An RNA of 177 nucleotides, treated with DMS and read out base by base.
RNA sequence: GGGAACGACUCGAGUAGAGUCGAAAAAUGGGCUGCCAGCAGGGGGAGGCUCAGAGUCGGUGGUGAACACAGCCGCAAUCGAUGUGCUGCGGCGGCUGCCAGGAGUGACAGAGGCCAACUUCCGGCCUGGGAUGUAGUUGUUCGCAACUACAUCCCAAAAAGAAACAACAACAACAAC
Reactivity to DMS in 0.01 (KOAc 150mM, MgCl2 10mM, bicine 150mM(pH8.5), 24C), signal-to-noise 1, nucleotides 027 to 126: a080u000g000g020g000c130u010g010c100c040a180g050c080a090g000g000g000g000g000a230g010g000c020u000c050a060g010a090g030u000c040g020g030u000g010g010u020g000a090a070c130a120c110a090g030c000c010g010c070a060a050u000c100g000a120u000g000u000g080c050u000g040c080g040g010c060g020g010c040u060g000c010c000a170g020g000a060g010u010g000a030c100a100g020a090g000g010c010c030a060a060c050u010u000c060c060g000g010c050c090
Source: RMDB library OK2TRN, as collected in RNAgym.